[RMDB]
RNA sequence: GGGAACGACUCGAGUAGAGUCGAAAAGCUGGGUGAGUAGCGAUCGCCUGUAACCCAUGCGGGAGCUGGAUCUGUGUGAAUGGUCGGUCGUGCCUAGGGCUGAUCAGAGAUCGGCCGCCCGUCCCAAGGGGCCACCAGGUCUGGGUGGGAUGAUGGACAUUUGCAUUUAGUUCGCUAAAUGCAAAUGAAAAGAAACAACAACAACAAC
Reactivity to DMS in 0.01 (KOAc 150mM, MgCl2 10mM, bicine 150mM(pH8.5), 24C), signal-to-noise 3, nucleotides 027 to 156: g040c040u010g020g010g020u000g010a130g020u000a100g020c030g010a160u010c050g010c020c010u010g000u000a130a090c030c030c010a080u000g020c010g020g020g020a120g020c060u000g020g010a070u000c050u000g020u000g010u010g000a140a150u000g040g040u000c000g030g050u000c000g030u000g000c050c050u010a120g040g020g000c010u000g010a050u000c060a180g000a160g000a070u000c010g040g010c050c040g000c050c010c020g000u000c040c070c040a160a150g020g050g010g030c040c020a050c070c020a070g010g020u020c060u000g000g050g010u010g010g000g010a130u000g000a200u000g020g020a300
Reactivity to 2A3 in 0.01 (KOAc 150mM, MgCl2 10mM, bicine 150mM(pH8.5), 24C), signal-to-noise 5, nucleotides 027 to 156: g030c020u030g000g000g030u040g030a120g050u070a020g060c040g090a140u080c110g030c030c010u030g040u060a050a040c010c020c010a030u180g020c120g000g020g010a050g020c070u110g040g010a020u000c020u020g080u030g030u020g230a170a110u200g030g020u020c000g000g000u030c040g030u030g010c020c030u100a150g040g070g000c020u030g030a080u100c060a030g060a020g000a140u040c010g000g000c000c020g040c010c000c000g040u070c010c010c010a050a070g050g010g000g000c010c000a020c010c000a010g020g000u010c040u050g020g000g060u170g000g000g020a050u110g020a040u070g050g030a020